[RMDB]
RNA sequence: GGGAACGACUCGAGUAGAGUCGAAAAUCUCGUGCAGAGAGUUUACAUCGUUGCCACUCUUUUACAACAAAAGUCUACAAUAAAUUAGAUUGCUGUAGUGAGUGGGCCAACAGUAGUACUUUACUGGUACAAAGACCAAUUUCGAUUGGUCUUUGUAAAAAGAAACAACAACAACAAC
Reactivity to 2A3 in 0.01 (KOAc 150mM, MgCl2 10mM, bicine 150mM(pH8.5), 24C), signal-to-noise 9, nucleotides 027 to 126: u010c000u000c010g070u120g080c010a010g020a000g000a000g010u000u010u010a060c070a160u170c150g000u010u010g020c000c000a010c030u010c000u040u260u190u020a020c010a040a000c010a020a140a070a070g040u000c020u020a050c070a130a200u190a300a080a050u160u010a020g020a030u030u080g030c030u010g010u010a010g020u000g030a000g000u000g000g010g050c080c000a000a000c000a000g000u010a000g020u010a010c010u030u060u030a220c000u020g040g040
Reactivity to DMS in 0.01 (KOAc 150mM, MgCl2 10mM, bicine 150mM(pH8.5), 24C), signal-to-noise 6, nucleotides 027 to 126: u000c000u000c010g030u040g010c030a030g010a110g000a020g010u010u010u010a010c020a080u030c180g000u010u000g000c000c010a010c000u000c000u030u020u030u000a010c010a030a040c030a040a100a180a140g020u000c000u010a010c300a100a130u040a070a090a130u040u010a010g000a050u000u020g010c100u000g010u000a020g000u010g000a000g010u000g000g000g020c170c010a010a010c000a060g000u000a010g000u020a010c000u000u000u010a070c000u000g000g020